[RMDB]
RNA sequence: GGGAACGACUCGAGUAGAGUCGAAAAACUCUUAGCAGUGUAUUAGAUGUGGAAAUAAAAGUCAUUUUGGGUAGCUGCUAUGAAACUUUCUGAGCAGAUUCUUGGCUGCACCGAUGUAUGACAGAAUUUAUGGAGAGGCCUAUGGCAAUAUGAGCAAGGUAAUUAUCGGAUUCGUCCGAUAAUUACCAAAAGAAACAACAACAACAAC
Reactivity to DMS in 0.01 (KOAc 150mM, MgCl2 10mM, bicine 150mM(pH8.5), 24C), signal-to-noise 1, nucleotides 027 to 156: a030c020u000c010u000u000a030g000c050a050g000u030g010u000a080u000u000a090g030a080u000g000u000g000g010a100a050a070u000a070a070a100a160g030u030c000a050u010u010u000u000g020g020g010u000a090g030c010u010g040c030u010a060u010g010a080a040a130c030u000u010u000c080u000g000a130g030c010a070g010a120u000u010c020u000u010g040g020c000u010g000c030a130c030c060g030a120u000g030u000a060u000g000a080c000a150g000a070a030u010u000u010a040u010g010g010a130g060a140g000g050c030c080u040a020u030g030g030c030a060a100u010a060u000g000a120g020c090a170a170
Reactivity to 2A3 in 0.01 (KOAc 150mM, MgCl2 10mM, bicine 150mM(pH8.5), 24C), signal-to-noise 2, nucleotides 027 to 156: a000c020u030c020u040u030a000g000c000a020g000u040g010u200a080u100u200a090g060a040u050g040u050g020g040a020a120a020u160a070a110a070a120g030u020c010a020u030u090u040u070g080g010g010u020a020g020c000u020g040c030u060a020u050g000a050a040a020c040u050u180u110c090u140g050a020g000c020a020g070a230u040u060c050u070u110g040g000c010u030g020c020a020c000c030g070a020u070g050u160a040u090g020a020c010a010g080a050a040u050u170u090a050u190g020g000a050g010a010g040g010c010c000u010a050u090g010g000c000a020a020u170a060u150g040a050g060c060a080a040
The record gives the reactivity of an RNA of 207 nucleotides to DMS and 2A3. Values cover nucleotides 27 to 156. The data come from the RNA Mapping Database (RMDB), library OK3TST.